The record gives the reactivity of an RNA of 177 nucleotides to DMS and 2A3. Values cover nucleotides 27 to 126. The reactions ran in a buffer of 150 mM KOAc, 10 mM MgCl2 and 150 mM bicine (pH 8.5), at 24 C. 2A3 adducts were read by reverse transcription with SuperScript II with manganese. For DMS, 559 sequencing reads were counted. Source: RMDB library OK2TST, as collected in RNAgym.
[RMDB]
RNA sequence: GGGAACGACUCGAGUAGAGUCGAAAACUGGCCUGAGUGAAUUACAAGGCCAGAAAUGCACAAUUAUUUGAACAAUACUCGGAGAUAAAAUAUACCAUCCCAAUUCCUACUUGCGAUGCUUGCAAUGCAAGAUGGAGCGUUUCGACGCUCCAUCUUGAAAAGAAACAACAACAACAAC
Reactivity to DMS in 0.01 (KOAc 150mM, MgCl2 10mM, bicine 150mM(pH8.5), 24C), signal-to-noise 1, nucleotides 027 to 126: c000u030g000g000c000c000u000g040a140g010u030g000a190a100u020u000a080c040a300a040g010g020c000c000a000g000a000a140a050u000g010c150a020c180a080a120u000u000a050u010u000u000g010a210a070c010a130a120u000a020c050u000c040g030g000a120g010a200u000a050a070a090a040u020a070u000a130c080c050a140u000c020c000c000a100a210u000u000c000c010u020a090c120u010u000g030c000g010a090u000g010c020u000u000g030c070a010a010u010g010
Reactivity to 2A3 in 0.01 (KOAc 150mM, MgCl2 10mM, bicine 150mM(pH8.5), 24C), signal-to-noise 1, nucleotides 027 to 126: c000u000g000g000c000c010u020g020a030g110u060g050a060a040u040u030a040c020a100a030g000g000c020c000a000g010a000a000a000u130g120c020a050c030a180a130u220u000a120u160u190u130g100a130a000c010a030a010u010a070c050u040c040g100g080a040g050a090u150a140a130a090a000u200a030u030a130c000c000a010u000c000c000c000a000a020u000u010c000c000u090a040c030u050u030g020c020g030a100u210g070c050u000u040g090c060a080a100u210g010